[RMDB]
RNA sequence: GGGAACGACUCGAGUAGAGUCGAAAAGUAGCGAUUCUGACGUGCAAAUCGAUCGUCAAACUUGGGUAUAGGGGCGAAAGACUAAUCGAACCAUCUAGUAGCUGGUUCCCUCCGAAAUUUCCCUCAGCAUAAGAGGUGCAUUCGUGCACCUCUUAUGAAAAGAAACAACAACAACAAC
Reactivity to 2A3 in 0.01 (KOAc 150mM, MgCl2 10mM, bicine 150mM(pH8.5), 24C), signal-to-noise 9, nucleotides 027 to 126: g090u080a020g050c010g020a050u110u040c070u180g050a030c030g070u080g060c080a050a090a060u100c040g040a050u030c020g060u030c060a050a070a060c040u040u040g070g000g010u080a080u070a120g000g020g010g010c070g050a060a060a030g070a060c080u140a080a110u130c060g020a010a020c010c010a010u030c010u020a110g070u080a020g110c030u010g030g000u030u020c000c000c000u020c010c010g050a050a060a030u020u030u010c000c000c000u060c030a070g020
Reactivity to DMS in 0.01 (KOAc 150mM, MgCl2 10mM, bicine 150mM(pH8.5), 24C), signal-to-noise 8, nucleotides 027 to 126: g010u010a100g010c020g010a060u000u000c050u010g010a050c040g020u010g000c130a070a130a110u010c080g000a080u010c040g010u000c050a050a100a060c070u000u010g000g010g010u000a060u010a050g000g000g020g010c070g010a070a070a130g000a090c160u010a070a090u020c100g010a040a060c040c020a050u010c030u000a100g010u020a110g010c110u010g000g000u000u000c010c020c010u000c020c020g000a030a070a130u030u000u000c000c000c010u010c140a090g000

Annotation: Structure probing data (2A3 and DMS) for a 177-nucleotide construct. Conditions: 150 mM KOAc, 10 mM MgCl2 and 150 mM bicine (pH 8.5), 24 C. 2A3 adducts were read by reverse transcription with SuperScript II with manganese. For DMS the reverse transcriptase was MarathonRT. Values cover nucleotides 27 to 126.